RNA sequence: GGGAACGACUCGAGUAGAGUCGAAAAAAUUUACAGUUCAAAACGCAUUGAGUAUGGCGUCUACUAUGGCAAGUCGUACUAUAGUAAACGGUGCGUAUGUUUCGCAACCUUACAAUCUGUCAAUUGACGCGUAAUAAAUCUUCGGAUUUAUUACGCGAAAAGAAACAACAACAACAAC
Reactivity to DMS in 0.01 (KOAc 150mM, MgCl2 10mM, bicine 150mM(pH8.5), 24C), signal-to-noise 2, nucleotides 027 to 126: a060a080u050u000u010a040c030a050g000u000u010c100a090a070a110a100c170g000c040a000u010u010g000a270g040u000a020u020g030g000c030g020u000c020u010a030c090u000a050u010g010g010c060a060a030g000u000c210g020u020a100c020u000a010u000a040g020u030a000a030a050c050g020g020u010g010c050g000u000a060u000g030u000u010u020c050g050c050a080a300c040c030u010u020a020c060a030a100u010c060u010g050u000c000a050a180u010u010g000a240
Reactivity to 2A3 in 0.01 (KOAc 150mM, MgCl2 10mM, bicine 150mM(pH8.5), 24C), signal-to-noise 2, nucleotides 027 to 126: a000a060u070u120u060a060c020a030g020u030u160c060a070a010a050a070c050g000c030a030u080u080g060a020g030u020a030u030g030g000c010g040u010c020u080a190c030u020a130u270g060g030c100a090a030g050u010c000g010u050a010c010u010a020u060a080g060u060a040a050a120c100g030g000u010g000c010g000u050a070u130g200u020u070u070c050g000c050a120a030c000c010u020u090a070c030a020a110u000c010u010g070u030c040a050a020u000u000g030a040
Structure probing data (DMS and 2A3) for a 177-nucleotide construct. The 2A3 profile rests on 1,100 reads. The data come from the RNA Mapping Database (RMDB), library OK2TST. DMS adducts were read by reverse transcription with MarathonRT. For 2A3 the reverse transcriptase was SuperScript II with manganese. The DMS profile rests on 962 reads.